[RMDB]
RNA sequence: GGGAACGACUCGAGUAGAGUCGAAAAUCGCACUGUUCGCAGUGCGAAAAAUCCUAAGUCGAUCGUUGAUCUGUAUUUCUUCUUGGACCUAUCGGAAACGAUAGCUAGAAGAGUACAGGGAGAUCGAUAUGGAAAAAGGAGAUAGUUCGCUAUCUCCCGAUACGUGGCAGUUCGCUGCCACGUAUCGAAAAGAAACAACAACAACAAC
Reactivity to 2A3 in 0.01 (KOAc 150mM, MgCl2 10mM, bicine 150mM(pH8.5), 24C), signal-to-noise 4, nucleotides 027 to 156: u010c000g000c000a000c000u000g030u050u030c090g020c140a000g000u000g000c010g000a000a000a000a000a000u040c020c010u050a200a050g020u000c010g000a000u000c010g080u160u000g000a000u010c000u000g020u000a010u050u300u000c010u010u010c010u010u150g140g090a220c040c010u010a000u000c000g040g050a050a030a050c030g000a010u000a010g000c010u000a000g000a000a000g000a010g000u000a000c000a010g000g000g000a010g000a000u000c000g000a000u010a050u050g040g010a040a080a050a060a060g020g000a000g000a000u000a000g030u040u110c210g020c170u010a000u000c000u000c000c000
Reactivity to DMS in 0.01 (KOAc 150mM, MgCl2 10mM, bicine 150mM(pH8.5), 24C), signal-to-noise 1, nucleotides 027 to 156: u010c010g050c000a000c010u000g020u000u020c300g060c000a020g000u020g020c020g000a000a010a070a040a050u000c010c000u000a080a280g010u000c000g020a030u000c030g050u010u010g000a030u010c000u000g000u010a010u000u000u020c020u000u000c000u010u000g060g010a120c210c000u010a010u000c000g050g000a300a120a290c010g060a030u020a000g010c000u000a020g020a020a020g000a010g000u010a010c000a060g010g000g010a030g010a000u000c010g000a000u010a040u020g010g000a040a040a090a240a020g010g000a000g000a060u000a000g000u000u010c300g070c000u010a040u000c000u000c010c020

Chemical mapping of a 207-nucleotide RNA with 2A3 and DMS. The reactions ran in a buffer of 150 mM KOAc, 10 mM MgCl2 and 150 mM bicine (pH 8.5), at 24 C. Reactivities are given for positions 27 through 156. The DMS profile rests on 2,657 reads. DMS adducts were read by reverse transcription with MarathonRT. It was measured as part of the RMDB library RNAMAK.